[RMDB]
RNA sequence: GGGAACGACUCGAGUAGAGUCGAAAAGAGCGAUUAGACAAAGGGGUAGAGCUACAUAUUAGAUAGCUGUAUAAUCGUUCAAGUUACAUCAAAACAUCAUCAAUAUUUAUUACUUACUUUCCUUUCUGCCAGAGUACGGUAUUCGUACCGUACUCAAGGAAAGACUAUAGUUCGCUAUAGUCUUUCCAAAAGAAACAACAACAACAAC
Reactivity to DMS in 0.01 (KOAc 150mM, MgCl2 10mM, bicine 150mM(pH8.5), 24C), signal-to-noise 2, nucleotides 027 to 156: g000a050g040c020g000a050u000u000a030g020a050c070a050a100a100g010g000g030g040u000a060g000a100g020c010u000a040c030a170u000a250u000u000a150g000a200u000a010g000c000u000g000u010a070u010a010a030u010c020g000u000u000c030a100a140g010u000u000a060c110a110u000c110a050a070a080a080c070a090u000c050a090u010c040a030a120u000a100u000u000u010a090u040u000a130c050u000u000a080c060u010u000u000c020c010u000u000u000c030u010g000c080c060a140g010a030g000u000a000c000g030g000u000a020u000u000c300g030u000a010c010c010g030u000a000c010u000c000a030a100
Reactivity to 2A3 in 0.01 (KOAc 150mM, MgCl2 10mM, bicine 150mM(pH8.5), 24C), signal-to-noise 9, nucleotides 027 to 156: g000a000g010c010g000a000u010u020a030g050a070c060a040a140a050g060g010g030g030u060a040g020a020g060c010u020a010c020a100u240a190u190u180a130g200a300u010a010g000c000u000g020u030a030u010a010a000u010c010g000u010u010c010a030a020g020u040u110a070c040a070u150c060a060a110a060a090c020a050u110c010a040u060c040a090a080u080a140u170u180u120a130u120u110a070c020u070u040a030c000u040u070u080c010c000u020u060u080c020u040g050c040c040a060g000a000g000u000a000c000g000g000u010a020u010u060c150g030u020a010c000c000g000u000a000c010u000c000a000a000
This 207-nucleotide RNA was probed chemically with DMS and 2A3. For DMS the reverse transcriptase was MarathonRT. The RNA was probed in 150 mM KOAc, 10 mM MgCl2 and 150 mM bicine (pH 8.5) at 24 C. Values are in units of 0.01, from 0 to 300, in steps of 10.